About this RNA:
Conditions: 150 mM KOAc, 10 mM MgCl2 and 150 mM bicine (pH 8.5), 24 C. This 177-nucleotide RNA was probed chemically with DMS and 2A3. The data come from the RNA Mapping Database (RMDB), library OK2TRN. The DMS profile rests on 2,225 reads. The 2A3 profile rests on 1,533 reads.
[RMDB]
RNA sequence: GGGAACGACUCGAGUAGAGUCGAAAAAUAGCUGAUCCACGUACCAGGCCGGUACUGUAUGAUCCGUACUGACUAUACGUACACGCGGCCUAGGCGCGGCCGUACGAUCGUACGUCGUACUAUGUGCAACGUCGAAAGCAUUCGUGCUUUCGACGUUAAAAGAAACAACAACAACAAC
Reactivity to DMS in 0.01 (KOAc 150mM, MgCl2 10mM, bicine 150mM(pH8.5), 24C), signal-to-noise 3, nucleotides 027 to 126: a110u010a100g010c070u010g020a080u010c020c070a080c100g000u010a060c030c040a100g010g010c020c040g020g000u000a010c020u010g020u010a020u000g000a030u000c050c250g000u010a060c160u000g000a020c120u010a140u000a040c010g000u000a010c040a120c210g050c040g000g000c000c020u000a070g020g000c020g000c090g020g020c160c160g000u000a040c080g010a060u000c160g020u000a070c150g000u010c040g020u000a030c030u000a110u020g050u010g010c130
Reactivity to 2A3 in 0.01 (KOAc 150mM, MgCl2 10mM, bicine 150mM(pH8.5), 24C), signal-to-noise 2, nucleotides 027 to 126: a020u170a020g020c050u070g030a040u060c060c020a060c110g020u010a090c000c040a060g060g060c030c020g000g000u020a010c050u090g010u000a090u080g040a040u000c000c040g040u080a060c060u110g060a010c000u110a030u010a160c030g010u030a010c100a040c110g070c020g000g000c000c010u030a090g090g010c000g010c020g090g030c000c000g000u010a020c020g060a070u050c050g010u090a040c050g020u010c010g000u020a070c040u100a100u120g180u020g050c030